[RMDB]
RNA sequence: GGGAACGACUCGAGUAGAGUCGAAAAGCCUUUCGUUCGCGAAAGGCAAAAACCUUUGUGUUUCCAUGCGGGAGAAUGUGGAGAUCCCAUUGGGAUUGACACAUUCUUUGAUCGCAUGGAGAACACUCUGGUAAAGAACCGAGGUUCGCCUCGGUUCGCGUAGUACGACCUUCGGGUCGUACUACGCAAAAGAAACAACAACAACAAC
Reactivity to 2A3 in 0.01 (KOAc 150mM, MgCl2 10mM, bicine 150mM(pH8.5), 24C), signal-to-noise 1, nucleotides 027 to 156: g000c000c000u000u010u010c000g010u000u080c210g000c000g160a000a000a000g000g000c020a000a100a100a000a000c000c010u000u000u000g000u000g000u000u000u030c020c000a010u010g000c080g000g050g000a010g000a000a040u030g000u000g050g000a000g010a030u000c010c030c210a300u200u300g000g000g000a020u020u030g000a010c000a000c000a010u000u010c000u000u000u000g040a080u060c000g000c000a000u000g000g010a040g020a000a000c000a000c000u020c000u000g020g000u120a240a230a130g050a010a000c000c000g000a000g010g010u080u170c180g080c080c000u000c050g000g020u010u030c000